[RMDB]
RNA sequence: GGGAACGACUCGAGUAGAGUCGAAAAGAUAUGGAAACGCUUGUGGGAGUCGCGGAUCGGAAACGAUCCCUACGACGACGAUCACACGGGCGUUUCCUAAGUCAAAGCAGUGUGUUCGCACACUGCAGGAUAGGGAGCAGUUCGCUGCUCCCUAUCCAAAAGAAACAACAACAACAAC
Reactivity to DMS in 0.01 (KOAc 150mM, MgCl2 10mM, bicine 150mM(pH8.5), 24C), signal-to-noise 2, nucleotides 027 to 126: g000a060u000a180u000g000g000a000a020a030c010g020c020u010u010g030u000g010g020g000a200g030u000c010g020c300g020g000a000u000c010g020g000a040a040a090c010g010a000u000c000c000c100u010a040c070g000a040c020g010a150c270g020a200u030c140a120c010a030c020g020g000g000c000g000u000u000u000c000c000u000a000a050g000u000c010a100a130a120g000c010a010g000u010g000u000g000u000u010c180g030c020a020c000a000c000u000g000c010a010
Reactivity to 2A3 in 0.01 (KOAc 150mM, MgCl2 10mM, bicine 150mM(pH8.5), 24C), signal-to-noise 2, nucleotides 027 to 126: g000a000u010a000u070g000g020a030a000a000c000g010c000u000u000g000u030g030g300g190a300g020u020c030g010c120g040g000a000u010c000g000g040a020a030a010c010g000a010u020c000c050c020u200a110c100g060a000c000g140a040c110g190a220u260c140a010c000a000c070g030g010g000c000g020u000u000u000c000c000u000a010a010g000u030c050a100a040a100g000c010a000g010u000g010u010g060u070u220c240g040c160a010c000a000c000u000g010c000a010